[RMDB]
RNA sequence: GGGAACGACUCGAGUAGAGUCGAAAAGAUAUGGAGCCGAGGUUGGAACUACUUGGUUGAUCGGAAACGAUCAACACAAGCCAACUAUCUCCUAAGUCAAACUCAGCAUACUUCGGUAUGCUGAGAAGACUUAUUGUAACUUCGGUUACAAUAAGUCAAAAGAAACAACAACAACAAC
Reactivity to 2A3 in 0.01 (KOAc 150mM, MgCl2 10mM, bicine 150mM(pH8.5), 24C), signal-to-noise 6, nucleotides 027 to 126: g010a020u090a040u140g010g020a020g050c200c250g280a230g110g030u010u030g020g000a100a090c130u210a040c010u300u000g000g000u000u010g000a000u000c000g020g010a050a030a030c010g000a000u000c000a000a000c190a030c000a030a000g000c000c000a010a000c010u010a080u030c010u000c010c000u010a150a020g050u020c040a050a020a100c000u000c000a000g000c000a000u010a000c000u030u030c080g110g000u000a000u000g000c000u000g000a000g010a000a000
Reactivity to DMS in 0.01 (KOAc 150mM, MgCl2 10mM, bicine 150mM(pH8.5), 24C), signal-to-noise 6, nucleotides 027 to 126: g000a040u000a300u010g000g000a020g030c300c180g010a070g000g010u000u000g000g000a060a020c050u010a300c020u010u000g010g010u000u000g000a000u000c000g010g010a070a080a190c000g010a010u000c000a010a000c000a060c020a010a010g010c020c000a010a020c010u000a110u000c020u000c000c000u000a060a150g000u000c020a100a080a190c000u000c000a000g010c000a010u000a000c010u000u020c200g010g000u000a000u000g000c010u000g000a000g000a040a070